[RMDB]
RNA sequence: GGGAACGACUCGAGUAGAGUCGAAAAGGGGGAUCGUCCUCGUUAUCAACGUCAAAGCCAAUAAUAACUGGCAAAGAAAAACAAAACCUAGCUUUCGCUGCCUAAUAAGCAGUAGCAUAGCUGAUCCUCCGUGCAUCGCCCAUGUGCUACGGUAAGGCACUAGGGUAUACUUCGGUAUACCCUAGUGAAAAGAAACAACAACAACAAC
Reactivity to DMS in 0.01 (KOAc 150mM, MgCl2 10mM, bicine 150mM(pH8.5), 24C), signal-to-noise 2, nucleotides 027 to 156: g010g000g030g030g000a070u010c040g000u080c050c030u010c130g040u050u000a140u010c080a060a100c060g000u000c090a080a090a290g020c020c100a040a120u000a140a160u000a080a090c100u000g010g000c020a060a140a140g000a040a080a060a110a200c060a140a060a060a120c050c020u000a110g020c000u000u010u010c030g000c020u000g000c040c010u000a100a130u000a080a110g000c000a030g000u000a060g040c060a040u000a030g030c020u010g000a050u010c030c000u000c040c020g050u000g020c090a100u000c050g000c030c010c000a110u010g000u010g010c000u020a020c030g010g010u000a040a060g000g000
Reactivity to 2A3 in 0.01 (KOAc 150mM, MgCl2 10mM, bicine 150mM(pH8.5), 24C), signal-to-noise 4, nucleotides 027 to 156: g020g010g000g010g000a040u120c020g080u060c010c040u010c030g040u060u100a080u090c050a020a050c010g040u050c090a080a060a090g000c030c030a030a020u230a140a060u180a120a100c100u060g010g000c010a020a130a000g050a000a080a020a010a010c090a020a100a020a020c020c040u090a020g020c000u000u030u040c020g010c010u010g020c000c010u070a130a060u240a240a010g000c010a000g000u020a040g020c040a050u020a010g000c030u030g000a070u020c000c000u030c010c000g000u010g020c000a020u050c060g020c010c010c000a010u070g000u000g010c030u060a010c000g010g030u100a050a050g040g010

This 207-nucleotide RNA was probed chemically with DMS and 2A3. For 2A3, 3,114 sequencing reads were counted. For DMS the reverse transcriptase was MarathonRT. The reactions ran in a buffer of 150 mM KOAc, 10 mM MgCl2 and 150 mM bicine (pH 8.5), at 24 C.